[RMDB]
Chemical mapping of a 177-nucleotide RNA with 2A3 and DMS. It was measured as part of the RMDB library OK2TRN. The reactions ran in a buffer of 150 mM KOAc, 10 mM MgCl2 and 150 mM bicine (pH 8.5), at 24 C. For 2A3 the reverse transcriptase was SuperScript II with manganese.
RNA sequence: GGGAACGACUCGAGUAGAGUCGAAAAAGAAAGAACACAUACUGAACAGACCAACUGGAGUACGUGUUCCAGAGGACCUGGUUGCUAGCUUGAAACUCGGCCUAGUUGACGGAGUGGUGAUGGAACAGUAAUUGGCAGUAUUCGUACUGCCAAUUACAAAAGAAACAACAACAACAAC
Reactivity to 2A3 in 0.01 (KOAc 150mM, MgCl2 10mM, bicine 150mM(pH8.5), 24C), signal-to-noise 2, nucleotides 027 to 126: a000g090a000a070a030g020a030a010c020a000c010a010u050a020c030u070g100a280a040c000a020g110a170c060c050a090a160c020u020g020g040a010g030u010a040c040g020u040g020u030u000c020c020a060g020a070g030g040a070c010c020u000g050g040u030u050g030c010u060a050g030c020u090u090g080a060a060a040c060u020c070g010g070c000c020u070a080g030u080u130g020a050c050g040g030a060g020u040g050g060u050g020a080u050g030g050a060a010c010a110
Reactivity to DMS in 0.01 (KOAc 150mM, MgCl2 10mM, bicine 150mM(pH8.5), 24C), signal-to-noise 5, nucleotides 027 to 126: a060g020a120a170a130g000a020a010c010a030c020a070u010a010c020u000g010a100a250c040a030g010a160c210c220a120a090c010u010g010g000a020g020u000a010c070g020u010g000u000u000c000c050a090g010a180g000g000a080c030c030u000g010g000u000u010g000c030u000a070g000c050u000u000g010a070a070a070c060u000c050g010g000c040c020u010a060g010u000u010g010a070c080g010g000a050g020u000g000g010u010g010a090u000g000g000a050a040c110a120